[RMDB]
RNA sequence: GGGAACGACUCGAGUAGAGUCGAAAAAAAGUGUACGAAAGAACAAAGAAGCAAUCAAACCGAGUAGUGAAAUGAUGGCUUCAGUCCAAAAUGGGCAAACACUACAGACGGAGCCAUAGGCAAUUAAUACAUAGUAGGUAUUCGUACCUACUAUGUAAAAAGAAACAACAACAACAAC
Reactivity to DMS in 0.01 (KOAc 150mM, MgCl2 10mM, bicine 150mM(pH8.5), 24C), signal-to-noise 7, nucleotides 027 to 126: a070a050a040g020u000g010u010a070c090g010a070a040a060g000a050a050c090a030a080a080g010a050a050g000c040a060a030u000c040a050a080a130c100c040g010a100g010u000a060g020u000g010a090a060a090u010g010a040u000g000g010c000u000u000c030a090g010u010c030c030a040a040a080a120u010g010g010g010c080a070a050a090c040a020c020u000a050c180a060g000a070c050g000g000a060g010c010c020a030u000a040g000g020c090a060a040u010u000a050a140
Reactivity to 2A3 in 0.01 (KOAc 150mM, MgCl2 10mM, bicine 150mM(pH8.5), 24C), signal-to-noise 5, nucleotides 027 to 126: a000a000a010g080u060g020u040a030c060g060a110a020a030g040a120a010c020a040a110a040g040a050a000g020c020a000a070u060c030a050a030a040c030c040g030a020g060u090a020g020u070g060a030a080a150u110g030a000u030g010g000c000u030u030c050a030g020u010c020c010a060a120a050a160u110g010g030g000c020a040a060a020c020a010c020u060a020c030a020g020a010c010g040g010a020g020c000c020a050u040a030g050g000c010a040a020u140u090a150a040
This 177-nucleotide RNA was probed chemically with DMS and 2A3.
It was measured as part of the RMDB library M2PK90.
For DMS, 10,690 sequencing reads were counted.